[RMDB]
RNA sequence: GGGAACGACUCGAGUAGAGUCGAAAAAAUGGCAUGUGUUCCUGUCGACGUCAUCUUACUCUUUACUUCUGUGAGUGAGAUUUCCGAUGUCCAAACAGGGUGAUUGUUUCCCUCAAAUGCAUGCCAGUCUUACCUCCACGUUCGCGUGGAGGUAAGAAAAAGAAACAACAACAACAAC
Reactivity to 2A3 in 0.01 (KOAc 150mM, MgCl2 10mM, bicine 150mM(pH8.5), 24C), signal-to-noise 4, nucleotides 027 to 126: a010a010u050g000g010c010a000u000g020u010g050u090u060c000c000u000g000u000c010g000a000c000g000u000c000a000u000c000u000u000a000c010u040c020u110u220u120a180c060u190u250c070u280g160u110g020a000g000u010g000a000g000a000u080u050u050c050c030g010a000u010g010u010c010c030a070a000a040c000a000g020g020g040u050g080a280u030u060g050u020u010u010c000c010c000u010c000a050a060a020u110g010c000a010u010g000c000c000a000g010
Reactivity to DMS in 0.01 (KOAc 150mM, MgCl2 10mM, bicine 150mM(pH8.5), 24C), signal-to-noise 3, nucleotides 027 to 126: a050a090u010g010g020c020a000u010g000u010g020u010u030c000c000u010g020u000c120g020a040c040g010u010c020a140u000c000u000u000a010c000u000c000u020u030u020a120c300u010u030c190u010g000u000g010a010g010u000g000a000g010a020u000u000u010c280c150g000a020u000g000u000c000c080a160a080a160c000a000g000g000g000u050g010a200u010u010g000u030u010u000c000c020c010u010c070a060a000a060u020g010c010a000u010g000c000c000a020g030
The data come from the RNA Mapping Database (RMDB), libraries RFM100 and RFMREP. The record gives the reactivity of an RNA of 177 nucleotides to 2A3 and DMS. Values cover nucleotides 27 to 126. The RNA was probed in 150 mM KOAc, 10 mM MgCl2 and 150 mM bicine (pH 8.5) at 24 C. 2A3 adducts were read by reverse transcription with SuperScript II with manganese.